[RMDB]
RNA sequence: GGGAACGACUCGAGUAGAGUCGAAAAACGUCCUCGUCGUACAGAACGGUAACAUGUUUUCCGAACAUCCGCGCUUGGGUAUACGAGUAUACACCCUACCCAACCCUCGCCAACGGGGAGGAUGGAAUUAAGGAGAGGGCCUUCGGGCCCUCUCCAACACAGUUUAAUACUUCGGUAUUAAACUGUGAAAAGAAACAACAACAACAAC
Reactivity to DMS in 0.01 (KOAc 150mM, MgCl2 10mM, bicine 150mM(pH8.5), 24C), signal-to-noise 2, nucleotides 027 to 156: a060c020g010u000c020c050u010c010g000u020c140g030u010a120c040a090g030a080a210c000g020g000u000a030a090c070a110u000g000u000u010u000u020c060c090g040a090a130c010a090u000c040c000g000c050g020c040u000u000g010g000g030u020a070u000a070c080g090a120g020u000a180u000a080c080a040c000c000c050u000a050c000c010c010a040a070c040c010c010u000c090g000c050c100a130a090c030g010g000g000g050a050g000g000a030u010g000g000a060a130u000u010a090a150g000g010a040g000a020g060g190g000c010c020u000u000c150g030g040g000c030c000c000u000c010u010c000c000a000a080
Reactivity to 2A3 in 0.01 (KOAc 150mM, MgCl2 10mM, bicine 150mM(pH8.5), 24C), signal-to-noise 4, nucleotides 027 to 156: a000c010g060u010c010c030u030c020g300u010c010g010u100a090c030a120g070a170a010c010g020g050u080a100a040c080a190u170g050u060u060u050u080c030c030g030a040a020c020a040u030c020c020g040c010g010c120u020u020g000g020g020u030a040u020a100c080g050a040g100u030a040u060a090c100a110c040c020c010u010a000c000c020c000a010a010c010c000c010u020c020g100c070c040a070a090c040g000g010g010g000a010g000g000a010u020g010g070a050a100u210u130a200a150g000g000a000g000a000g000g000g000c050c000u060u070c150g100g010g000c000c010c000u000c000u010c000c000a000a000